Source information
This 177-nucleotide RNA was probed chemically with 2A3 and DMS. For 2A3 the reverse transcriptase was SuperScript II with manganese. DMS adducts were read by reverse transcription with MarathonRT. Conditions: 150 mM KOAc, 10 mM MgCl2 and 150 mM bicine (pH 8.5), 24 C.
RNA sequence: GGGAACGACUCGAGUAGAGUCGAAAACGGCCUUAGGGCUAACAUAAGAUAUGCUUAUCUCCGUUGGGAGAAAGUUUUGUUUAAUUAGUCGUGUAUACUCGAGCUCGUGAGAGUGUAAGUAUACAAACGACUGAUCUUGUUUCGACAAGAUCAGUCGAAAAGAAACAACAACAACAAC
Reactivity to 2A3 in 0.01 (KOAc 150mM, MgCl2 10mM, bicine 150mM(pH8.5), 24C), signal-to-noise 4, nucleotides 027 to 126: c020g050g040c000c040u090u170a250g110g000g000c000u020a020a000c040a150u150a060a030g040a070u120a030u180g010c000u050u050a210u300c000u000c020c020g190u240u300g210g040g000a010g010a010a010a010g000u010u080u180u150g060u050u050u070a090a100u070u030a030g030u030c060g040u030g020u030a000u000a000c010u000c040g080a000g020c020u000c000g050u060g080a120g010a000g010u070g040u120a010a000g000u000a050u000a040c020a000a050a010
Reactivity to DMS in 0.01 (KOAc 150mM, MgCl2 10mM, bicine 150mM(pH8.5), 24C), signal-to-noise 2, nucleotides 027 to 126: c190g000g000c000c040u000u030a090g020g000g000c010u000a060a040c100a090u010a090a100g000a100u050a030u030g000c010u000u000a170u000c010u010c010c010g040u040u010g010g010g000a020g020a010a000a010g010u000u000u000u000g010u000u000u000a100a070u000u000a020g010u010c040g010u010g010u000a020u000a000c000u000c080g010a300g000c010u010c000g020u030g000a260g010a030g030u010g020u040a130a020g000u000a020u020a020c000a040a080a200